[RMDB]
RNA sequence: GGGAACGACUCGAGUAGAGUCGAAAACUCGCCGGAAGGCGCGAAACUCUGGGGGAACCCCGGCCCGAUAUAUUGCGAGCGCACGGCGGACGGGCAACUGCAAUGGGUAUCAAUUCCUGCUUGGGCAGUUAGCUGUUGUGUUCGCACAACAGCUAACAAAAGAAACAACAACAACAAC
Reactivity to 2A3 in 0.01 (KOAc 150mM, MgCl2 10mM, bicine 150mM(pH8.5), 24C), signal-to-noise 4, nucleotides 027 to 126: c010u010c000g050c010c000g100g040a120a110g040g000c020g000c020g090a080a050a020c080u090c060u080g010g000g000g000g070a070a080c020c000c000c010g020g010c030c000c000g020a000u110a020u030a050u170u220g030c060g010a050g040c010g000c040a020c020g010g030c030g010g020a030c040g000g050g030c040a110a060c040u030g010c010a010a200u080g020g000g050u060a080u190c080a060a030u100u040c000c000u020g070c030u070u060g030g020g000c040a080
Reactivity to DMS in 0.01 (KOAc 150mM, MgCl2 10mM, bicine 150mM(pH8.5), 24C), signal-to-noise 3, nucleotides 027 to 126: c040u010c000g000c020c020g030g040a140a100g000g000c000g060c060g000a100a060a100c120u000c040u000g020g000g000g000g070a120a160c010c010c030c040g010g000c000c000c010g000a070u000a100u040a030u020u010g000c070g010a090g010c150g040c010a030c070g000g000c040g000g020a100c030g020g000g000c060a070a120c040u000g010c040a020a130u000g000g020g000u000a300u000c070a080a150u020u040c060c010u000g010c040u010u000g000g000g020c020a070